Chemical mapping of a 177-nucleotide RNA with 2A3 and DMS.
RNA sequence: GGGAACGACUCGAGUAGAGUCGAAAAUUGUCGAGCACGGCGGUGAGGAUUCGGCGCAGGUGGUCCGGAUCGAUCGAGACGAACAGGUCCGGUUCCGCGCGUGUGGUGAUGUCCGCUCCAGUAGCGGCUAUCCAGCACCCUUCGGGGUGCUGGAUAGAAAAGAAACAACAACAACAAC
Reactivity to 2A3 in 0.01 (KOAc 150mM, MgCl2 10mM, bicine 150mM(pH8.5), 24C), signal-to-noise 3, nucleotides 027 to 126: u170u130g020u040c020g030a010g070c020a000c020g030g000c020g000g050u130g040a040g180g000a060u040u050c050g030g010c060g050c080a070g020g190u200g050g000u030c000c000g000g000a010u010c040g010a020u040c060g020a030g050a200c110g040a130a120c090a150g180g000u000c000c000g000g000u040u040c000c000g000c010g000c000g000u030g060u030g020g100u090g020a050u060g110u000c000c000g010c000u030c040c080a120g020u210a000g060c000g000g000
Reactivity to DMS in 0.01 (KOAc 150mM, MgCl2 10mM, bicine 150mM(pH8.5), 24C), signal-to-noise 2, nucleotides 027 to 126: u010u050g010u000c020g020a300g010c040a050c030g020g010c000g000g000u020g000a120g020g000a090u010u000c020g000g000c000g000c080a210g060g030u010g060g010u040c000c040g010g000a000u000c000g000a070u010c020g000a140g010a110c080g020a090a040c300a220g000g010u000c000c000g000g000u000u000c000c010g010c000g000c010g020u040g000u010g010g020u010g000a080u000g010u020c010c000g000c000u010c010c120a120g010u030a020g010c020g000g030
Overview:
The RNA was probed in 150 mM KOAc, 10 mM MgCl2 and 150 mM bicine (pH 8.5) at 24 C. For DMS the reverse transcriptase was MarathonRT. High 2A3 reactivity points to a flexible backbone, as in loops and unpaired stretches.